[RMDB]
RNA sequence: GGGAACGACUCGAGUAGAGUCGAAAAAUGGUGGCAGGCACCUGUAGUCCCAGCUACUCAGGGGACUGAGGCAGGAGAAUGGUGUGAACCUGGGAGGCAGAGCUUGCAGUGAGCCGAGAUCGCACCACUGCACUCCAGCCUGGGUGACAGAGCGAGAUAUCCUGCAGUAGUUCGCUACUGCAGGAUAAAAAGAAACAACAACAACAAC
Reactivity to DMS in 0.01 (KOAc 150mM, MgCl2 10mM, bicine 150mM(pH8.5), 24C), signal-to-noise 1, nucleotides 027 to 156: a060u000g040g020u000g000g040c030a110g030g000c020a030c020c030u000g020u000a070g020u030c040c090c010a100g020c030u000a050c000u000c020a140g020g000g010g030a030c020u000g000a030g030g010c020a050g040g000a090g000a090a040u000g010g030u000g060u000g000a020a040c020c020u020g010g010g000a070g000g030c040a070g010a030g050c030u000u000g020c040a060g000u000g000a060g010c000c020g010a300g020a090u000c020g070c030a040c030c010a030c010u000g040c000a060c020u020c000c000a090g010c020c000u010g000g010g080u000g000a080c080a030g020a100g020c000g020a140g010a220
Reactivity to 2A3 in 0.01 (KOAc 150mM, MgCl2 10mM, bicine 150mM(pH8.5), 24C), signal-to-noise 1, nucleotides 027 to 156: a030u090g000g000u030g060g000c020a050g030g000c020a010c060c000u020g010u100a010g030u030c020c000c000a000g050c020u050a050c020u030c110a000g000g000g010g050a060c010u040g040a070g040g010c000a000g040g020a020g070a130a130u110g000g000u000g000u020g010a020a080c040c010u060g020g000g070a050g000g020c020a000g000a010g190c050u040u060g020c040a040g000u020g100a030g080c040c030g080a050g010a110u100c050g030c030a050c070c040a000c010u020g000c030a010c050u020c020c000a030g020c020c030u040g000g050g000u040g000a010c050a040g050a020g000c080g000a010g000a040
The data come from the RNA Mapping Database (RMDB), library OK3TST. An RNA of 207 nucleotides, treated with DMS and 2A3 and read out base by base. DMS adducts were read by reverse transcription with MarathonRT. DMS (dimethyl sulfate) methylates the pairing face of unpaired adenines and cytosines.